Structure probing data (2A3 and DMS) for a 177-nucleotide construct. For 2A3, 1,694 sequencing reads were counted. The RNA was probed in 150 mM KOAc, 10 mM MgCl2 and 150 mM bicine (pH 8.5) at 24 C. For DMS the reverse transcriptase was MarathonRT.
RNA sequence: GGGAACGACUCGAGUAGAGUCGAAAAGACGCUGAUGCGAUCGACUGUAAGAUAGAUAUACUGAGAAGACAGAUACGUACGGCAAGUAUCGUCGCCAGAAAUACAGUCGCAAAUUGCCGUACGAAGAAUGGUGGAGGUAGUUCGCUACCUCCACCAUAAAAGAAACAACAACAACAAC
Reactivity to 2A3 in 0.01 (KOAc 150mM, MgCl2 10mM, bicine 150mM(pH8.5), 24C), signal-to-noise 3, nucleotides 027 to 126: g140a000c020g000c130u180g040a070u200g070c010g000a030u090c020g000a010c000u020g010u080a100a030g010a250u160a110g060a030u120a020u020a260c010u010g070a000g030a170a050g050a070c020a010g080a030u010a110c000g030u030a000c000g000g000c010a020a010g050u000a020u010c010g030u020c020g010c070c030a000g090a000a100a040u050a000c000a020g000u000c000g040c180a000a060a140u010u020g000c000c000g000u000a000c030g020a010a100g050a080
Reactivity to DMS in 0.01 (KOAc 150mM, MgCl2 10mM, bicine 150mM(pH8.5), 24C), signal-to-noise 1, nucleotides 027 to 126: g000a090c000g050c020u020g030a170u160g020c000g000a280u000c040g000a090c000u000g000u000a040a010g040a100u030a150g000a140u030a260u040a250c000u000g000a090g000a000a080g110a000c070a040g010a000u000a270c050g010u000a000c000g000g000c000a020a080g000u000a030u000c000g000u000c020g000c070c000a120g000a050a000a110u000a010c000a060g000u000c050g000c120a000a090a140u000u000g000c030c000g000u030a090c000g080a130a110g000a190